[RMDB]
RNA sequence: GGGAACGACUCGAGUAGAGUCGAAAAACAGAACUAUUAGAUGUUAAAGAAACAGGAAAAUAUGAUCCAAGGUCAAGAGAAAAAUCAGUUUAUAGGAGCUGACUAUGGUUACUCAGAUGUUUGAAAAAGCAGAGAAGUGCUUUACCAACAUAUGUAAAUGAUGAAUGUUUUUCGAAACAUUCAUCAUAAAAGAAACAACAACAACAAC
Reactivity to 2A3 in 0.01 (KOAc 150mM, MgCl2 10mM, bicine 150mM(pH8.5), 24C), signal-to-noise 4, nucleotides 027 to 156: a020c070a020g060a050a020c040u100a090u280u210a100g050a110u080g050u110u140a100a140a070g040a050a090a000c020a040g020g110a060a120a020a000u170a080u110g040a040u000c020c020a020a040g050g010u060c040a040a020g020a010g030a090a090a000a000a010u030c020a020g000u010u090u120a170u070a070g160g000a030g000c020u010g020a020c020u050a070u130g060g000u030u040a030c030u020c070a010g010a170u020g020u020u030u020g050a070a030a010a000a010g030c040a000g020a000g050a210a000g090u040g010c000u050u030u030a040c020c010a000a000c010a020u110a030u130g060u110a040a110
Reactivity to DMS in 0.01 (KOAc 150mM, MgCl2 10mM, bicine 150mM(pH8.5), 24C), signal-to-noise 2, nucleotides 027 to 156: a090c030a130g010a060a110c060u000a160u010u000a080g020a120u000g000u000u000a040a080a160g010a140a040a060c040a080g000g000a040a090a070a140u000a030u000g000a090u000c030c020a060a090g010g030u000c040a030a120g000a090g000a030a060a050a060a050u000c020a070g020u000u000u000a060u000a140g000g000a060g010c010u000g000a030c060u030a080u010g020g030u000u000a060c040u010c080a110g010a090u000g000u000u000u000g000a050a070a060a060a010g040c040a090g000a160g000a110a120g030u000g010c000u000u000u000a140c080c010a060a050c020a050u000a040u010g010u000a070a100